An RNA of 207 nucleotides, treated with DMS and 2A3 and read out base by base. The 2A3 profile rests on 3,079 reads. For DMS the reverse transcriptase was MarathonRT. The RNA was probed in 150 mM KOAc, 10 mM MgCl2 and 150 mM bicine (pH 8.5) at 24 C. 2A3 adducts were read by reverse transcription with SuperScript II with manganese. It was measured as part of the RMDB library M2RFOK.
[RMDB]
RNA sequence: GGGAACGACUCGAGUAGAGUCGAAAAAUCCUCAGGUUCAUAAGCGUGAUGAUUGGGUGUUCAUGCUCCAUGCAUGACAUGUGCCUCCUUUGAACCUUGUUACGACCUUGGCAUAUUACCCAUCUGAAAAAGACGUUCGCGUUCGCGCGAACGUCAACACAAUCUGGUUGUUCGCAACCAGAUUGUGAAAAGAAACAACAACAACAAC
Reactivity to DMS in 0.01 (KOAc 150mM, MgCl2 10mM, bicine 150mM(pH8.5), 24C), signal-to-noise 1, nucleotides 027 to 156: a130u000c000c000u000c040a070g040g000u000u000c000a030u010a030a090g030c140g000u000g030a260u000g000a120u010u000g010g030g000u000g000u020u010c020a020u010g030c020u000c220c150a110u020g000c030a020u000g010a050c170a190u000g010u010g000c030c010u010c090c020u000u000u000g020a010a030c010c020u000u020g010u010u000a120c130g000a120c070c070u020u000g000g040c030a080u000a120u000u000a100c040c000c010a050u000c050u000g000a100a110a100a100a150g020a060c000g060u000u000c000g030c000g000u000u000c300g000c040g050c000g010a000a000c000g020u000c010a000a070
Reactivity to 2A3 in 0.01 (KOAc 150mM, MgCl2 10mM, bicine 150mM(pH8.5), 24C), signal-to-noise 4, nucleotides 027 to 156: a000u020c000c000u020c010a000g010g020u000u000c020a030u070a240a060g040c090g140u110g100a120u060g020a030u110u180g000g050g000u040g030u080u070c000a000u010g000c010u090c160c060a150u300g000c000a000u000g010a010c010a020u080g020u040g030c000c010u040c000c020u020u010u000g000a010a020c000c000u010u050g060u040u080a100c060g030a080c030c050u080u100g000g000c010a010u030a060u050u150a030c000c000c000a020u000c040u050g090a090a040a030a040a030g010a000c000g000u000u000c010g020c010g040u030u050c190g000c010g000c000g090a000a000c000g010u000c000a000a000